[RMDB]
RNA sequence: GGGAACGACUCGAGUAGAGUCGAAAAGUAAGGACUGCGUAACAUGAUAUGCAUGUAUGCCAUGAGCAUUCGCACCCUAUGUAGCCAGUUAGCACGCAGUGACGCAUUGACGGAGCGUCGCCGUGCUUCUACCUUCGGUGUUCGCGCCGAGGGUAGAAAAAGAAACAACAACAACAAC
Reactivity to DMS in 0.01 (KOAc 150mM, MgCl2 10mM, bicine 150mM(pH8.5), 24C), signal-to-noise 9, nucleotides 027 to 126: g010u020a090a060g000g020a050c100u000g000c040g010u010a100a060c040a020u010g010a160u020a100u020g010c030a050u020g000u020a040u010g010c010c020a090u020g010a150g010c040a050u000u010c040g010c010a050c060c040c020u010a040u020g010u010a100g010c030c030a070g000u010u010a030g000c000a000c000g000c140a090g030u000g000a010c000g010c010a080u030u020g020a130c200g000g000a110g000c000g010u000c000g010c000c000g000u000g010c010u000
Reactivity to 2A3 in 0.01 (KOAc 150mM, MgCl2 10mM, bicine 150mM(pH8.5), 24C), signal-to-noise 9, nucleotides 027 to 126: g100u100a040a060g050g030a040c060u030g010c030g060u060a080a030c020a030u050g060a090u130a070u300g110c030a010u090g030u050a040u050g010c020c030a170u240g030a030g060c010a020u040u050c020g000c010a040c010c020c000u030a050u110g090u040a020g050c010c010a040g030u060u080a000g000c000a000c020g020c070a020g000u000g010a000c000g000c020a050u030u200g100a110c110g100g060a090g010c000g000u000c000g000c010c000g000u000g000c000u000
Record summary
Structure probing data (DMS and 2A3) for a 177-nucleotide construct. For DMS, 52,305 sequencing reads were counted. DMS adducts were read by reverse transcription with MarathonRT. Values cover nucleotides 27 to 126. The reactions ran in a buffer of 150 mM KOAc, 10 mM MgCl2 and 150 mM bicine (pH 8.5), at 24 C. The data come from the RNA Mapping Database (RMDB), library OK1LIB. 2A3 adducts were read by reverse transcription with SuperScript II with manganese. The 2A3 profile rests on 92,464 reads.